[RMDB]
RNA sequence: GGGAACGACUCGAGUAGAGUCGAAAAGUCUCAGCAGAGAUUGCGUGCUGGACGAAUAAUGAGAUAGGUCUCCAUAUCCGAAACUGGUAUGGUAAGAGUGGGGACAUUCUGAGGAUCAGUAAGGCCGUGAUGCUAAGUAUUUCGAUACUUAGCAUCAAAAAGAAACAACAACAACAAC
Reactivity to 2A3 in 0.01 (KOAc 150mM, MgCl2 10mM, bicine 150mM(pH8.5), 24C), signal-to-noise 9, nucleotides 027 to 126: g010u000c030u000c110a020g000c020a000g050a030g020a120u080u170g090c050g040u030g000c010u000g000g020a000c010g000a020a020u130a060a060u130g040a010g040a090u100a100g100g050u010c010u000c010c000a010u090a300u050c020c030g070a130a100a040c070u070g110g050u240a110u210g070g010u030a100a000g030a020g020u020g000g000g020g000a010c010a010u060u010c010u020g060a030g010g010a020u040c020a010g030u060a050a040g050g000c000c010g020
Reactivity to DMS in 0.01 (KOAc 150mM, MgCl2 10mM, bicine 150mM(pH8.5), 24C), signal-to-noise 9, nucleotides 027 to 126: g000u000c000u030c000a070g010c050a050g000a150g010a110u010u010g000c120g000u010g010c000u000g000g000a050c040g010a100a070u020a090a080u020g000a060g010a050u020a070g010g010u000c020u000c020c020a030u010a080u020c010c020g000a080a110a090c090u010g010g030u020a040u030g000g000u020a090a080g000a020g020u000g010g000g050g000a100c020a040u010u000c020u000g000a160g010g000a060u010c040a050g000u010a090a090g000g000c040c050g000